[RMDB]
RNA sequence: GGGAACGACUCGAGUAGAGUCGAAAAACAUGGCGAAUCGAAGACAAAGUCGUCGUCGUGGGAAUAAAAAUAGAAAUUCGGCUACCGUUCGGCGAGCUCCGCCUAAUCGAGCAACCCAGAGCUCCUCCCAACGUUUAUCGUUCGCGAUAAACGUUGGAAAAGAAACAACAACAACAAC
Reactivity to DMS in 0.01 (KOAc 150mM, MgCl2 10mM, bicine 150mM(pH8.5), 24C), signal-to-noise 1, nucleotides 027 to 126: a110c000a020u000g010g000c000g050a010a160u140c020g000a070a100g050a120c220a290a000a150g010u000c010g010u000c110g000u000c030g000u000g000g000g010a170a020u000a010a020a020a040a200u080a050g010a060a000a110u000u000c070g000g000c020u000a070c190c050g000u000u010c040g010g040c120g000a170g000c010u000c000c090g080c010c000u010a080a140u020c150g000a040g000c110a200a150c010c000c000a020g000a000g080c000u060c010c030u000c170
Reactivity to 2A3 in 0.01 (KOAc 150mM, MgCl2 10mM, bicine 150mM(pH8.5), 24C), signal-to-noise 4, nucleotides 027 to 126: a000c010a000u000g010g000c000g020a020a050u160c020g020a110a060g170a180c100a070a190a030g080u020c020g010u000c000g000u000c000g000u020g020g030g030a040a050u220a110a130a020a000a020u230a070g110a050a090a020u120u010c010g050g000c030u050a100c020c040g080u040u030c020g020g000c040g000a020g030c030u000c000c000g000c000c030u020a030a040u070c060g000a000g010c010a020a020c000c000c000a020g010a010g070c000u010c010c000u040c020

Structure probing data (DMS and 2A3) for a 177-nucleotide construct.
Conditions: 150 mM KOAc, 10 mM MgCl2 and 150 mM bicine (pH 8.5), 24 C.
It was measured as part of the RMDB library OK1LIB.